[RMDB]
RNA sequence: GGGAACGACUCGAGUAGAGUCGAAAAUAAAAGCGCGAAAAAGAUCGAUCGAACGUUUGAACGCGCAAGUCUAAGUUUGAUACGGGCAUACUAGCUAGCUAGCUAGCAAAACAAACUUAGUAAAAAACUUAUAUGCUGAGUUCGCUCAGCAUAUAAGAAAAGAAACAACAACAACAAC
Reactivity to 2A3 in 0.01 (KOAc 150mM, MgCl2 10mM, bicine 150mM(pH8.5), 24C), signal-to-noise 2, nucleotides 027 to 126: u130a000a060a000a030g000c000g010c000g070a150a060a000a040a020g070a040u050c040g010a040u080c120g100a140a110c010g050u000u040u090g010a080a010c000g000c010g000c010a000a000g010u010c010u020a010a030g010u010u000u010g070a100u090a100c020g000g090g010c050a020u050a160c010u010a000g020c000u000a050g140c030u060a000g000c010u020a000g040c030a090a010a000a020c000a000a000a000c000u010u000a000g020u050a080a080a000a000a000a050
Reactivity to DMS in 0.01 (KOAc 150mM, MgCl2 10mM, bicine 150mM(pH8.5), 24C), signal-to-noise 3, nucleotides 027 to 126: u000a080a060a100a190g020c010g010c000g000a060a100a060a100a180g000a050u000c070g010a120u000c200g030a110a110c110g000u010u000u000g000a070a150c000g010c000g010c010a040a040g000u030c010u000a000a010g000u000u000u010g040a110u000a090c200g000g000g000c140a110u000a100c000u000a010g020c010u000a120g020c190u020a060g010c010u010a040g010c020a050a020a080a170c000a000a000a010c000u000u010a000g000u000a000a050a060a060a040a060

Source: RMDB library M2PK90, as collected in RNAgym. An RNA of 177 nucleotides, treated with 2A3 and DMS and read out base by base. Reactivities are given for positions 27 through 126. DMS adducts were read by reverse transcription with MarathonRT. For DMS, 2,038 sequencing reads were counted. The reactions ran in a buffer of 150 mM KOAc, 10 mM MgCl2 and 150 mM bicine (pH 8.5), at 24 C.